[RMDB]
RNA sequence: GGGAACGACUCGAGUAGAGUCGAAAAAAGCAGGGUGUGAGAGAAACUCUCUCCCAGCCGGUUCGCGCAGCGACCCUUUUCGACUCUACUCGGGUUAGCUGCGCGAACUGGCUGGCGUUCCCCAGAAAUACAUGGAGGAAUUCGUUCCUCCAUGUAUAAAAGAAACAACAACAACAAC
Reactivity to 2A3 in 0.01 (KOAc 150mM, MgCl2 10mM, bicine 150mM(pH8.5), 24C), signal-to-noise 1, nucleotides 027 to 126: a000a000g140c110a030g010g050g020u050g000u060g020a050g010a000g050a170a240a190c010u030c000u000c010u020c010c030c000a000g010c000c000g010g010u000u010c010g000c000g040c000a010g000c010g020a020c010c000c000u030u070u070u140c050g010a010c010u000c000u020a010c010u010c000g010g000g000u000u010a010g010c000u000g000c040g000c000g000a000a000c000u000g010g010c010u000g010g000c010g000u010u010c030c000c000c000a020g060a060a200
Reactivity to DMS in 0.01 (KOAc 150mM, MgCl2 10mM, bicine 150mM(pH8.5), 24C), signal-to-noise 4, nucleotides 027 to 126: a070a070g010c080a070g000g000g020u000g020u000g000a040g020a050g000a150a120a110c110u010c030u000c030u010c060c010c000a020g010c000c010g010g010u000u000c010g010c000g010c000a020g010c000g000a040c010c010c030u000u000u000u000c040g000a030c010u000c010u000a020c030u000c040g010g010g000u000u000a020g040c010u000g020c000g000c010g000a010a010c000u000g000g000c000u000g000g000c000g010u000u000c010c000c010c090a190g000a080a090